Source: RMDB library OK3TST, as collected in RNAgym. The record gives the reactivity of an RNA of 207 nucleotides to 2A3. Values cover nucleotides 27 to 156. Values are in units of 0.01, from 0 to 300, in steps of 10. The reactions ran in a buffer of 150 mM KOAc, 10 mM MgCl2 and 150 mM bicine (pH 8.5), at 24 C. For 2A3 the reverse transcriptase was SuperScript II with manganese. The 2A3 profile rests on 485 reads.
RNA sequence: GGGAACGACUCGAGUAGAGUCGAAAAUGGACGCGUGCAGCAGAGCUCGCAAUUAUGCGAAAAGAUGAGCGUUUAGUAGAUGAGCUCAAAGGAGUCGCGCUGUCAUUGUAUUUUCAAUCAGCGGUUUCGUGGAGUGACUACGAAAUUUCUUUGGGUGGUCAUCGUGGUACUUCGGUACCACGAUGACAAAAGAAACAACAACAACAAC
Reactivity to 2A3 in 0.01 (KOAc 150mM, MgCl2 10mM, bicine 150mM(pH8.5), 24C), signal-to-noise 1, nucleotides 027 to 156: u140g010g010a000c010g070c030g020u170g090c090a070g030c020a040g080a070g120c090u010c000g000c000a000a110u230u080a170u180g030c020g040a060a060a060a060g110a150u090g000a050g000c040g010u020u040u040a090g030u040a000g020a090u140g030a010g000c000u000c000a050a000a000g040g000a000g020u160c030g070c000g000c090u000g010u040c040a010u000u060g050u050a180u070u180u040u140c010a010a040u000c010a000g030c010g080g000u000u000u000c010g000u060g050g000a160g090u140g150a150c040u000a010c030g030a000a000a000u010u030u020c050u110u060u030g010g000g000u050g040